[RMDB]
RNA sequence: GGGAACGACUCGAGUAGAGUCGAAAAGACGGUCUUCGGACCGUCACGAGCACGUGAGUGCUCGACUGAUCGUACGCGAUCAGAUAAUAAACAAGAAAAAAAAGGAACGCUACGGCGUUCCACGUGGAGACGUGAGUCUCCACGAGGAGAACGUGAGUUCUCCAAGCUCAUCUACGGAUGAGCAGGCUAGGCGUGAGCCUAGCCAUGGAAGAAAGGGCUUCGGCCACUCAAACUACAGAGACGCCAGUCACUCAGAUAUCCUGGUAAAGUGCCUAUUCGUAGGCACUAAAAGAAACAACAACAACAAC
Reactivity to 2A3 in 0.01 (KOAc 150mM, MgCl2 10mM, bicine 150mM(pH8.5), 24C), signal-to-noise 5, nucleotides 027 to 266: g010a000c000g000g010u020c030u060u090c270g120g010a010c000c000g000u000c000a000c000g000a000g000c000a010c020g060u130g140a120g010u010g010c000u000c000g000a020c000u010g000a000u010c000g040u070a060c270g020c020g110a000u000c010a010g010a020u180a060a080u110a040a080a040c170a140a100g280a140a120a060a030a020a000a010a030g000g000a010a000c000g010c010u020a020c230g100g010c000g000u000u010c000c010a000c000g000u000g000g010a010g000a000c040g090u160g090a080g000u000c000u000c010c000a000c000g000a010g000g000a010g000a000a010c010g070u100g120a110g020u030u010c000u000c000c000a000a010g000c000u000c000a010u000c000u010a020c260g090g000a000u000g000a000g000c010a000g000g000c000u000a000g000g000c020g050u090g070a040g010c000c000u000a000g000c000c000a000u070g020g040a060a120g030a140a160a050g070g000g000c060u100u140c200g160g020c040c010a080c040u060c040a140a170a100c060u160a070c100a060g010a010g000a010c060g010c000c000a010g010u010c010a010c030u010c010a010g060a160u110a040u300c060c010u020g020g030u080a120a150
Reactivity to DMS in 0.01 (KOAc 150mM, MgCl2 10mM, bicine 150mM(pH8.5), 24C), signal-to-noise 2, nucleotides 027 to 266: g000a010c000g000g010u010c000u010u020c170g000g010a010c000c000g000u000c000a010c000g010a020g020c000a010c020g010u020g000a130g030u000g000c000u020c000g000a080c010u020g010a000u000c020g030u020a130c240g010c030g010a000u010c000a000g000a090u010a120a100u060a070a130a130c170a150a160g010a020a000a000a000a100a090a180a290g000g010a030a000c000g030c010u000a070c180g010g020c020g000u000u000c000c000a000c000g040u010g000g000a030g000a020c010g010u020g010a270g030u000c010u010c000c000a000c040g010a050g000g010a020g000a010a000c020g000u050g000a290g000u000u000c000u000c020c000a090a070g020c010u000c010a000u010c020u010a150c190g070g000a020u010g000a010g010c000a040g000g000c010u040a020g000g000c000g000u010g010a130g010c000c000u000a000g000c010c000a010u030g000g000a140a070g010a120a230a090g020g010g040c000u000u000c170g030g060c000c040a050c050u000c140a100a100a070c030u010a230c200a120g000a050g050a210c090g040c020c010a000g020u000c090a000c030u000c020a080g020a110u000a060u000c010c010u000g000g000u000a050a050